[RMDB]
RNA sequence: GGGAACGACUCGAGUAGAGUCGAAAAGAUAUGGAUUCGACUUUUGACGAGAGGCCCAUCGGAAACGAUGGAUCUCUCGAUAAGUCGAUCCUAAGUCAAAACGUGACGAUCUUCGGAUCGUCACGAACGAACUCUACUAGUUCGCUAGUAGAGUUCGAAAAGAAACAACAACAACAAC
Reactivity to DMS in 0.01 (KOAc 150mM, MgCl2 10mM, bicine 150mM(pH8.5), 24C), signal-to-noise 4, nucleotides 027 to 126: g000a050u000a300u010g000g010a040u000u010c010g020a010c000u000u000u000u000g020a180c110g000a010g000a020g030g010c050c000c000a000u000c000g000g000a140a060a120c000g010a010u000g000g010a000u000c000u000c000u000c010g020a030u000a000a000g000u000c000g010a020u000c000c000u000a050a120g010u000c040a070a050a120a160c020g030u000g000a010c000g000a000u000c000u000u010c220g010g000a010u000c000g010u000c000a010c000g000a020a040
Reactivity to 2A3 in 0.01 (KOAc 150mM, MgCl2 10mM, bicine 150mM(pH8.5), 24C), signal-to-noise 4, nucleotides 027 to 126: g040a020u080a040u170g010g010a040u270u210c020g000a000c000u110u120u130u210g300a190c040g000a000g000a010g000g000c030c000c000a000u000c010g040g000a110a040a050c010g010a000u000g000g000a010u000c000u000c000u000c010g000a010u000a000a000g000u000c000g000a000u000c000c000u000a150a010g050u020c040a020a000a100a140c020g000u010g000a010c000g010a000u000c000u050u080c290g120g000a000u000c000g000u000c000a000c000g000a010a000
Structure probing data (DMS and 2A3) for a 177-nucleotide construct. 2A3 adducts were read by reverse transcription with SuperScript II with manganese. For DMS the reverse transcriptase was MarathonRT.